RNA sequence: GGGAACGACUCGAGUAGAGUCGAAAAGACCAAUCGUUCGCGAUUGGUCAAAAGGUGGAUGCUACGCUACCGAAGUAGCAAAAGUGCAGCUACAAACCACAAAAACUUGGUUGUUCGCAACCAAGAAGAAGUCUUUUCAGUUCGCUGAAAAGACUUCAAAAGAAACAACAACAACAAC
Reactivity to DMS in 0.01 (KOAc 150mM, MgCl2 10mM, bicine 150mM(pH8.5), 24C), signal-to-noise 1, nucleotides 027 to 126: g000a000c000c000a010a000u000c010g140u000u010c240g010c000g000a010u000u000g000g010u010c000a020a040a110a090g000g000u000g000g000a030u000g010c020u000a040c090g000c050u000a030c060c300g060a130a140g000u000a000g000c000a030a060a030a050g000u000g000c030a020g000c000u000a060c000a070a080a180c000c010a100c100a150a060a030a140a100c030u000u000g000g010u000u000g000u010u010c160g030c010a010a000c000c000a000a000g010a080a070
Reactivity to 2A3 in 0.01 (KOAc 150mM, MgCl2 10mM, bicine 150mM(pH8.5), 24C), signal-to-noise 1, nucleotides 027 to 126: g000a020c010c000a000a010u000c010g030u000u070c200g000c010g120a010u000u000g030g010u000c010a020a010a000a030g080g010u010g030g010a020u030g030c010u080a020c040g000c000u040a010c010c080g120a270a060g020u000a000g000c000a050a090a000a020g110u100g020c020a010g000c030u030a030c020a050a190a050c020c020a010c030a060a110a030a040a010c000u000u000g000g020u000u000g030u060u090c180g020c050a020a000c010c000a010a000g000a010a020
Description: Chemical mapping of a 177-nucleotide RNA with DMS and 2A3. The DMS profile rests on 677 reads. Conditions: 150 mM KOAc, 10 mM MgCl2 and 150 mM bicine (pH 8.5), 24 C. Reactivities are given for positions 27 through 126. For 2A3 the reverse transcriptase was SuperScript II with manganese.